[RMDB]
RNA sequence: GGGAACGACUCGAGUAGAGUCGAAAACUUCAUCCAUCAUAUUCAGUACAAGUAAAAUUGGGCGACCCAACUCGAUCAUUUCGAGUACAAGGCCUAAAUGCAAUUUUAAGUUGGUCGCAUCAACCAAAUGAUUUAUCAUGUUCGCAUGAUAAAUCAUAAAAGAAACAACAACAACAAC
Reactivity to 2A3 in 0.01 (KOAc 150mM, MgCl2 10mM, bicine 150mM(pH8.5), 24C), signal-to-noise 6, nucleotides 027 to 126: c130u090u040c020a090u010c050c010a040u080c030a030u110a130u220u150c050a030g060u090a100c030a160a020g070u110a120a080a110a140u070u030g010g020g000c010g010a030c000c030c000a020a010c010u000c010g040a030u060c050a150u130u220u030c010g010a000g000u010a030c030a080a030g100g010c000c010u030a040a050a010u080g010c020a050a120u030u050u070u130a100a070g030u050u060g020g000u000c010g010c050a090u080c010a010a030c030c020a020a150
Reactivity to DMS in 0.01 (KOAc 150mM, MgCl2 10mM, bicine 150mM(pH8.5), 24C), signal-to-noise 9, nucleotides 027 to 126: c200u000u010c070a060u000c030c030a040u000c070a060u000a070u000u000c050a080g020u010a070c120a060a060g010u010a040a040a080a170u000u000g000g010g010c030g000a050c020c010c290a100a030c000u000c010g000a010u010c290a150u000u010u000c010g010a010g010u000a070c130a130a130g010g010c010c020u000a010a040a060u000g000c130a040a040u000u010u000u000a030a080g010u000u000g010g030u000c070g030c040a060u000c060a040a100c070c080a050a100

Source information:
This 177-nucleotide RNA was probed chemically with 2A3 and DMS. Source: RMDB library OK2TST, as collected in RNAgym. The RNA was probed in 150 mM KOAc, 10 mM MgCl2 and 150 mM bicine (pH 8.5) at 24 C. For 2A3, 13,009 sequencing reads were counted. The DMS profile rests on 11,515 reads.